[RMDB]
RNA sequence: GGGAACGACUCGAGUAGAGUCGAAAAUCAGGAGCCGGAUGAUUACGCACAAGACCAGCGGCUUCUUGAAGAAAUUCUGAACUUGACUGCGUACCAGGCGCUGGGGGCCAUUACUAGGCCUCUUCACCAUGCCCUACGAUUUCGAUCGUAGGGCAUGAAAAGAAACAACAACAACAAC
Reactivity to 2A3 in 0.01 (KOAc 150mM, MgCl2 10mM, bicine 150mM(pH8.5), 24C), signal-to-noise 4, nucleotides 027 to 126: u030c000a000g030g040a030g000c010c010g050g030a050u100g010a030u050u140a060c060g060c050a060c060a200a030g040a060c060c030a020g040c080g070g010c050u040u020c010u040u120g080a060a050g040a030a080a030u210u080c090u090g050a140a070c060u070u100g050a060c070u050g000c010g010u010a040c040c010a080g030g000c030g000c080u070g020g000g010g020g010c020c020a040u180u100a110c110u100a140g010g000c000c000u000c020u030u030c000a030c030
Reactivity to DMS in 0.01 (KOAc 150mM, MgCl2 10mM, bicine 150mM(pH8.5), 24C), signal-to-noise 3, nucleotides 027 to 126: u010c050a080g020g000a060g010c010c000g000g000a100u020g010a110u010u030a070c020g000c060a090c080a050a060g030a080c090c010a040g000c110g000g000c040u000u010c000u020u040g000a060a080g030a060a080a110u030u020c010u000g000a110a100c070u000u030g000a160c120u030g010c030g000u020a050c140c030a030g000g000c020g060c090u000g020g040g010g020g070c000c020a090u010u030a110c280u000a040g000g000c000c000u000c020u000u000c040a090c170

Structure probing data (2A3 and DMS) for a 177-nucleotide construct.
For 2A3, 1,990 sequencing reads were counted.
For DMS, 3,129 sequencing reads were counted.
For 2A3 the reverse transcriptase was SuperScript II with manganese.
Conditions: 150 mM KOAc, 10 mM MgCl2 and 150 mM bicine (pH 8.5), 24 C.